[RMDB]
This 177-nucleotide RNA was probed chemically with DMS and 2A3. DMS adducts were read by reverse transcription with MarathonRT. The reactions ran in a buffer of 150 mM KOAc, 10 mM MgCl2 and 150 mM bicine (pH 8.5), at 24 C. It was measured as part of the RMDB library OK2TST. The DMS profile rests on 1,804 reads. For 2A3, 1,764 sequencing reads were counted.
RNA sequence: GGGAACGACUCGAGUAGAGUCGAAAACUCUUCCAUUGUUGCUCUCCACUCUCAUUUCCUGGACUGUGCAACAUCACACAAAGAUCUAUCCUCCUGAGGUGGCCUUCUGGAUACAUGCUUCUAGAACCUAAUUUUACACCUUCGGGUGUAAAAUUAGAAAAGAAACAACAACAACAAC
Reactivity to DMS in 0.01 (KOAc 150mM, MgCl2 10mM, bicine 150mM(pH8.5), 24C), signal-to-noise 2, nucleotides 027 to 126: c070u010c060u000u010c020c020a160u000u000g000u000u010g000c030u000c030u010c010c050a100c140u000c070u000c070a060u010u000u000c060c060u000g000g000a060c090u000g030u030g020c060a070a100c110a040u000c090a090c080a110c150a090a120a080g010a090u000c040u000a100u010c020c020u000c020c040u000g020a060g010g010u000g010g020c020c020u000u000c020u000g010g000a050u000a030c160a120u010g020c060u000u000c010u000a080g010a160a160c160
Reactivity to 2A3 in 0.01 (KOAc 150mM, MgCl2 10mM, bicine 150mM(pH8.5), 24C), signal-to-noise 1, nucleotides 027 to 126: c000u010c000u100u070c040c030a090u030u060g050u000u070g010c010u010c000u030c010c020a060c030u080c010u010c020a110u060u070u100c010c010u000g010g010a050c030u070g010u040g000c020a050a030c010a060u120c010a010c010a000c020a050a120a030g060a040u030c000u060a090u050c010c020u030c000c030u100g030a070g010g010u040g000g000c010c000u030u000c010u020g040g000a000u030a060c020a040u110g030c010u000u010c010u070a020g030a060a050c020